About this RNA
Source: RMDB library OK1LIB, as collected in RNAgym. The record gives the reactivity of an RNA of 177 nucleotides to 2A3 and DMS. For 2A3 the reverse transcriptase was SuperScript II with manganese. The reactions ran in a buffer of 150 mM KOAc, 10 mM MgCl2 and 150 mM bicine (pH 8.5), at 24 C. The 2A3 profile rests on 3,304 reads.
[RMDB]
RNA sequence: GGGAACGACUCGAGUAGAGUCGAAAAACGGGCAGUGGCGAUGGCAACGCGGCAGCCGCAGGGUCGACUUCUUCGCAGCCGCAACAGACGGGAGACGGGCAAAGAGGGGCGCUCGUUCUGUUGGAAGAUCCUACCUGACUUUCGAGUCAGGUAGGAUAAAAGAAACAACAACAACAAC
Reactivity to 2A3 in 0.01 (KOAc 150mM, MgCl2 10mM, bicine 150mM(pH8.5), 24C), signal-to-noise 3, nucleotides 027 to 126: a010c030g030g000g000c020a030g020u030g110g020c030g060a080u080g030g030c030a020a060c090g010c030g030g000c010a010g030c040c020g010c020a040g050g010g040u070c040g040a050c030u080u000c000u030u050c040g010c060a040g000c000c010g000c010a010a010c010a030g050a030c010g000g020g000a040g020a030c000g000g040g000c050a090a090a030g040a070g020g010g010g010c020g000c010u030c000g010u070u020c010u020g030u030u000g020g010a060a050g040
Reactivity to DMS in 0.01 (KOAc 150mM, MgCl2 10mM, bicine 150mM(pH8.5), 24C), signal-to-noise 2, nucleotides 027 to 126: a140c130g000g000g000c030a010g010u020g020g020c000g000a080u010g000g040c090a150a040c070g000c020g000g040c050a180g000c060c060g000c090a030g020g010g020u010c050g000a070c060u030u000c010u010u000c060g020c070a100g040c030c070g000c020a090a110c040a060g010a080c020g000g000g000a090g000a110c110g020g000g000c130a050a060a120g000a140g000g010g000g010c040g050c020u040c040g010u010u010c020u010g020u010u000g000g000a060a090g020